[RMDB]
RNA sequence: GGGAACGACUCGAGUAGAGUCGAAAAGCCCCACCCCUCCCGCCCGAGGCACGCGAUCACUCGGGCGGGUGAACAUCACCGGCUCAGCUGGAUUCUCGAACCCCCGACACCUCUACGCUCAGCGCACUAAUAAGUUCUAAUUCGUUAGAACUUAUUAAAAAGAAACAACAACAACAAC
Reactivity to DMS in 0.01 (KOAc 150mM, MgCl2 10mM, bicine 150mM(pH8.5), 24C), signal-to-noise 7, nucleotides 027 to 126: g020c060c010c000c100a260c030c010c010c010u000c000c000c010g030c000c010c010g010a020g000g010c150a080c080g010c050g020a060u020c070a110c010u000c010g010g000g010c010g000g000g000u010g010a080a080c150a070u010c050a080c060c030g000g010c010u020c060a080g020c030u000g000g000a100u030u010c020u010c030g010a110a150c030c010c010c010c010g010a080c060a040c030c020u000c030u010a060c070g000c030u000c040a060g010c070g000c040a080c100
Reactivity to 2A3 in 0.01 (KOAc 150mM, MgCl2 10mM, bicine 150mM(pH8.5), 24C), signal-to-noise 8, nucleotides 027 to 126: g010c000c000c000c000a020c000c000c000c000u020c000c000c000g000c000c000c000g000a000g030g040c090a050c090g120c050g060a130u120c040a020c050u000c000g000g000g000c000g000g000g000u000g000a000a010c020a050u070c010a010c030c010g040g000c010u020c040a020g010c020u050g030g040a110u100u030c040u030c040g100a100a090c000c000c000c010c000g020a010c010a020c030c000u010c010u050a030c040g010c020u020c020a020g010c020g000c040a020c040
Source: RMDB libraries RFM100 and RFMREP, as collected in RNAgym. Chemical mapping of a 177-nucleotide RNA with DMS and 2A3.